This 177-nucleotide RNA was probed chemically with 2A3 and DMS.
The 2A3 profile rests on 1,400 reads.
RNA sequence: GGGAACGACUCGAGUAGAGUCGAAAAUAACUAAACGUAUGGCGGAAGACUUAACGGAGUACCUGGCGGAUCACGGCGUAAGAGUUCGCUACUUGCACUCAGACAUAGAUACCGUUGAGCGCGUGGAUACGCGGCUGUUAUUCGUAACAGCCGCGUAAAAAGAAACAACAACAACAAC
Reactivity to 2A3 in 0.01 (KOAc 150mM, MgCl2 10mM, bicine 150mM(pH8.5), 24C), signal-to-noise 1, nucleotides 027 to 126: u110a000a030c050u040a130a000a010c010g070u070a070u080g090g000c030g060g060a080a020g030a060c020u030u070a050a040c020g040g010a020g040u000a010c000c040u050g060g000c000g100g000a080u090c060a010c000g030g000c040g020u050a120a000g010a000g020u140u090c030g020c040u100a090c050u040u110g000c020a020c010u000c020a020g020a020c020a050u130a020g090a090u080a100c000c000g020u040u050g020a030g020c050g010c010g010u050g000g030a050
Reactivity to DMS in 0.01 (KOAc 150mM, MgCl2 10mM, bicine 150mM(pH8.5), 24C), signal-to-noise 3, nucleotides 027 to 126: u000a110a140c050u000a030a080a080c130g020u010a050u000g000g030c040g000g050a080a080g010a060c070u000u000a080a070c060g010g010a090g000u000a040c040c080u000g010g020c050g000g030a060u000c090a040c070g000g000c040g010u000a080a110g010a080g020u000u000c150g040c020u010a060c130u000u020g010c050a050c030u000c030a060g010a090c110a060u040a090g010a090u000a100c090c040g000u020u000g000a040g000c060g030c030g010u000g010g000a220